[RMDB]
Structure probing data (2A3 and DMS) for a 177-nucleotide construct.
2A3 is a SHAPE reagent: it acylates the 2'-hydroxyl of flexible nucleotides of all four kinds.
DMS adducts were read by reverse transcription with MarathonRT.
The reactions ran in a buffer of 150 mM KOAc, 10 mM MgCl2 and 150 mM bicine (pH 8.5), at 24 C.
For DMS, 864 sequencing reads were counted.
It was measured as part of the RMDB library OK2TRN.
RNA sequence: GGGAACGACUCGAGUAGAGUCGAAAAUUGAUAUCUCAACUUUUAAGGGCAUUAUCAACCUUGACGGGUACCCUAUGAAUAUACCAUUUCAGCAUUUCGGCGCAACAAUUCAGAUAUCUGACACGACUGAGUAUAGGCUUUUCGAAGCCUAUACUCAAAAAGAAACAACAACAACAAC
Reactivity to 2A3 in 0.01 (KOAc 150mM, MgCl2 10mM, bicine 150mM(pH8.5), 24C), signal-to-noise 1, nucleotides 027 to 126: u020u030g050a000u000a030u120c030u000c020a060a150c100u270u210u070u100a030a060g030g070g030c130a100u180u000a080u130c000a030a070c000c000u110u160g120a120c020g000g000g000u050a060c000c000c000u110a080u150g090a070a060u140a010u040a170c020c000a100u020u100u090c080a060g000c000a010u000u050u100c100g030g020c000g000c000a000a140c000a050a080u070u100c000a010g000a060u030a050u180c000u000g010a000c060a020c150g120a010c060
Reactivity to DMS in 0.01 (KOAc 150mM, MgCl2 10mM, bicine 150mM(pH8.5), 24C), signal-to-noise 1, nucleotides 027 to 126: u000u000g000a040u010a060u020c030u000c030a120a110c160u010u000u000u010a090a090g010g010g010c200a020u010u030a080u000c050a160a080c010c030u010u000g020a150c120g000g000g000u000a080c040c000c050u000a100u010g020a070a040u010a040u010a080c030c030a130u020u000u010c010a040g000c050a080u000u000u010c110g000g010c030g000c090a070a040c100a050a060u000u000c070a050g000a100u010a060u000c040u000g000a080c130a060c060g050a060c220